RNA sequence: GGGAACGACUCGAGUAGAGUCGAAAACCACAGAAGGGGCCACAGCUGUGCUGCAGUGUGAGCUGAGCAAGGCGGCCCCCGUGGAGUGGCGGAAGGGGUCUGAGACCCUCAGAGAUGGGGACAGAUACUAAACAGCACAGUUCGCUGUGCUGUUUAGAAAAGAAACAACAACAACAAC
Reactivity to 2A3 in 0.01 (KOAc 150mM, MgCl2 10mM, bicine 150mM(pH8.5), 24C), signal-to-noise 1, nucleotides 027 to 126: c000c020a000c000a040g150a190a110g000g010g010g020c040c020a090c060a140g000c080u090g020u060g070c000u240g200c010a020g000u030g010u070g100a060g030c020u020g000a000g010c030a040a110g030g000c020g000g000c000c000c000c000c000g000u010g010g020a080g000u050g040g070c200g010g030a120a060g040g000g000g000u000c010u040g030a100g050a190c050c010c010u030c050a040g040a010g020a070u100g000g000g010g000a000c000a010g070a020u040a140
Reactivity to DMS in 0.01 (KOAc 150mM, MgCl2 10mM, bicine 150mM(pH8.5), 24C), signal-to-noise 4, nucleotides 027 to 126: c010c000a070c080a090g020a270a080g020g000g020g020c000c040a080c170a280g000c040u000g010u010g010c000u000g020c010a020g000u000g010u020g010a170g000c010u000g000a090g000c000a060a080g000g010c030g010g000c000c000c000c010c030g000u000g010g010a170g010u010g000g010c150g000g000a130a070g000g010g000g000u010c020u010g000a120g000a100c070c040c010u010c060a020g000a170g000a140u010g000g010g020g020a130c100a070g000a150u000a140
The record gives the reactivity of an RNA of 177 nucleotides to 2A3 and DMS. The DMS profile rests on 3,191 reads. It was measured as part of the RMDB library OK2TRN. DMS adducts were read by reverse transcription with MarathonRT.